Structure probing data (2A3 and DMS) for a 177-nucleotide construct. The RNA was probed in 150 mM KOAc, 10 mM MgCl2 and 150 mM bicine (pH 8.5) at 24 C. For DMS, 3,326 sequencing reads were counted. For DMS the reverse transcriptase was MarathonRT.
[RMDB]
RNA sequence: GGGAACGACUCGAGUAGAGUCGAAAAUUUUUACCCAUCUACGACUAUAACUCUGUGGAUGAAGGCAACCUCCAAGAUAACGUCUUCAACUGGGGAUACGAUCCGCUCAAUUAUAGCGUACCCGAGGACAUAAUAGCCUGUUCGCAGGCUAUUAUGUAAAAGAAACAACAACAACAAC
Reactivity to 2A3 in 0.01 (KOAc 150mM, MgCl2 10mM, bicine 150mM(pH8.5), 24C), signal-to-noise 3, nucleotides 027 to 126: u040u060u020u040u100a100c000c000c000a020u000c070u050a030c030g200a140c030u020a020u030a180a020c010u030c020u110g050u050g050g030a060u030g080a100a010g050g000c020a030a060c010c000u000c030c010a070a020g020a070u060a070a070c080g080u020c020u090u060c030a090a080c070u050g020g000g040g000a030u040a100c040g030a050u020c000c020g010c000u010c050a040a090u130u010a110u090a060g000c020g000u010a060c060c040c010g070a030g080g030
Reactivity to DMS in 0.01 (KOAc 150mM, MgCl2 10mM, bicine 150mM(pH8.5), 24C), signal-to-noise 4, nucleotides 027 to 126: u010u010u020u010u000a140c030c010c010a090u000c100u010a050c030g030a160c060u000a060u010a040a060c080u000c070u000g010u000g000g000a030u000g040a090a130g020g030c090a050a110c050c020u000c040c080a060a050g010a120u000a070a100c180g020u010c050u000u010c070a080a130c160u000g020g000g020g000a090u000a070c080g000a040u010c030c010g010c020u000c060a040a060u000u000a040u000a030g000c010g000u000a050c070c010c010g010a110g010g000